[RMDB]
RNA sequence: GGGAACGACUCGAGUAGAGUCGAAAAGAUAUGGAUCCCGUAACUUCAACAGCUCGGAAACGAGACAUGAAGAUUACAGGGAUCCUAAGUCAAAACUAGUCUUACCACUUCGGUGGUAAGACUAGAAGUCGUGAAAAAAGUUCGCUUUUUUCACGACAAAAGAAACAACAACAACAAC
Reactivity to 2A3 in 0.01 (KOAc 150mM, MgCl2 10mM, bicine 150mM(pH8.5), 24C), signal-to-noise 1, nucleotides 027 to 126: g020a000u050a030u170g020g010a010u000c000c030c000g010u000a010a010c010u010u020c010a070a080c020a220g030c010u010c000g040g050a050a070a040c010g010a000g030a030c000a040u070g010a010a010g030a020u000u020a040c240a220g000g020g000a000u000c010c000u000a030a000g010u020c050a000a010a100a180c000u010a010g000u000c000u000u010a000c000c010a010c020u070u060c300g060g000u040g020g000u010a010a010g000a010c000u000a000g000a000a000
Reactivity to DMS in 0.01 (KOAc 150mM, MgCl2 10mM, bicine 150mM(pH8.5), 24C), signal-to-noise 2, nucleotides 027 to 126: g000a060u000a300u000g000g010a000u000c000c010c000g000u000a000a010c000u000u000c000a020a080c220a210g020c000u000c000g000g000a060a120a290c000g000a020g000a020c070a230u000g000a020a020g000a180u000u000a000c020a150g030g000g000a000u000c000c000u000a010a050g000u000c020a050a080a140a140c000u000a010g000u000c000u000u010a010c000c000a010c000u000u030c190g020g000u000g000g010u000a000a000g010a000c000u000a000g010a040a030